[RMDB]
RNA sequence: GGGAACGACUCGAGUAGAGUCGAAAAGACGCCCUUAGAAGAAGAGGCUAGGGGGUAUUCCGGUGUGGGAUACUUAGUAAUAUGCAACGCUAAUUGCAUAAGAUUGUAGGACGGAAUUUACAGUCUUUAGAGAUAAGCACGUUCGCGUGCUUAUCAAUACAUGUAGAGCGUUCGCGCUCUACAUGUAAAAAGAAACAACAACAACAAC
Reactivity to 2A3 in 0.01 (KOAc 150mM, MgCl2 10mM, bicine 150mM(pH8.5), 24C), signal-to-noise 6, nucleotides 027 to 156: g050a000c030g050c000c000c000u010u020a090g010a170a020g030a030a010g020a060g030g020c020u030a020g010g000g000g000g040u040a040u050u020c030c030g080g050u210g030u170g060g070g020a030u030a100c020u040u050a030g020u070a050a120u040a030u080g010c000a020a020c040g040c240u150a100a080u070u010g000c000a010u010a040a030g040a070u040u090g030u050a010g010g080a020c050g020g040a030a030u090u080u050a080c030a010g010u000c000u030u060u070a120g040a000g000a040u000a000a000g010c000a000c000g020u020u060c190g010c010g090u000g000c000u000u000a000u000c000a000a000
Reactivity to DMS in 0.01 (KOAc 150mM, MgCl2 10mM, bicine 150mM(pH8.5), 24C), signal-to-noise 2, nucleotides 027 to 156: g000a100c070g020c000c020c030u000u000a140g020a080a130g020a110a070g010a120g030g000c010u000a050g020g020g020g020g000u010a070u010u010c050c000g020g020u020g030u010g020g030g020a060u000a000c030u000u000a110g020u010a080a220u000a020u000g000c020a010a040c070g030c180u000a080a150u000u000g010c020a050u020a030a040g010a070u010u000g020u010a040g010g010a120c010g010g000a070a240u000u010u040a020c090a060g020u010c010u000u000u010a100g030a240g000a020u000a020a010g000c010a010c000g000u010u000c300g010c080g040u000g000c000u000u000a010u000c000a030a120